[RMDB]
RNA sequence: GGGAACGACUCGAGUAGAGUCGAAAACGAAUAUAAGUGCUAUAGCCAGGUGUGGUGGUCCGCAGUCCAGCUACUCGGGAGCCUGAGGCAGGAGGAUCGCUUGAUUCUGGGAGGUUGAGGGUGCAGUGAGCUGUGUUUGUGCCAGUGUACUCCAGCCCCACACUUUCUCUUUCGAGAGAAAGUGUGGAAAAGAAACAACAACAACAAC
Reactivity to 2A3 in 0.01 (KOAc 150mM, MgCl2 10mM, bicine 150mM(pH8.5), 24C), signal-to-noise 2, nucleotides 027 to 156: c010g020a090a000u100a010u100a260a060g080u100g060c040u030a060u130a130g130c040c040a010g000g040u100g000u090g100g020u010g020g000u010c020c000g000c030a000g000u060c020c000a020g030c030u060a090c010u040c060g210g020g010a040g000c010c030u030g020a140g020g000c060a010g060g130a070g000g030a030u000c000g020c060u030u150g040a040u150u000c000u000g000g050g000a050g010g000u020u020g000a120g020g020g000u000g000c020a110g130u000g020a080g000c030u080g010u060g090u230u300u180g080u040g050c030c010a080g010u020g000u030a000c030u020c010c000a000g020c060c000

Source: RMDB library OK3TST, as collected in RNAgym. Structure probing data (2A3) for a 207-nucleotide construct.